Chemical mapping of a 207-nucleotide RNA with 2A3 and DMS. The data come from the RNA Mapping Database (RMDB), library RNAMAK. For 2A3 the reverse transcriptase was SuperScript II with manganese. DMS adducts were read by reverse transcription with MarathonRT. Values cover nucleotides 27 to 156.
[RMDB]
RNA sequence: GGGAACGACUCGAGUAGAGUCGAAAAUCCAGUUUCGACUGGACGCCAACCUUUGUGCCGAAACAUAGGGAGCGUCGCAAGUCUACCCAUUGGGUAGUCACCGACGCAUCGAUCUAUGAGAUAGCUGCACUCUGGUAUGAGCACCAUUCGUGGUGAACACCUAUCCGAGAUUCGUCUCGGAUAGGUGAAAAGAAACAACAACAACAAC
Reactivity to 2A3 in 0.01 (KOAc 150mM, MgCl2 10mM, bicine 150mM(pH8.5), 24C), signal-to-noise 4, nucleotides 027 to 156: u020c020c000a040g000u070u100u120c170g080a040c020u010g020g020a060c040g030c040c010a040a050c000c000u010u000u010g010u000g000c000c060g060a060a060a070c050a000u000a010g030g000g000a030g000c010g000u010c010g000c040a200a240g020u000c010u000a000c030c010c060a300u260u300g020g010g000u000a010g000u030c030a040c220c010g000a010c000g040c030a170u220c020g110a050u000c000u010a000u020g070a090g070a240u150a070g090c050u030g010c020a000c000u000c000u020g010g020u150a300u130g090a040g040c020a010c010c010a020u070u090c200g100u050g030g010u150g030a110a030
Reactivity to DMS in 0.01 (KOAc 150mM, MgCl2 10mM, bicine 150mM(pH8.5), 24C), signal-to-noise 1, nucleotides 027 to 156: u010c030c000a080g040u010u010u000c110g020a110c020u000g000g000a070c050g010c040c010a080a100c010c020u000u010u020g040u000g000c020c030g000a170a260a210c000a020u000a000g070g000g000a020g010c010g020u000c020g060c030a110a190g010u010c000u000a020c040c000c010a300u000u030g040g050g020u000a000g010u000c000a180c130c000g020a030c000g030c010a050u000c100g000a010u000c000u000a010u010g000a100g010a210u000a120g010c040u000g050c020a050c000u010c060u010g000g060u000a110u000g010a150g010c000a200c000c010a040u000u000c040g010u010g040g000u000g000a150a300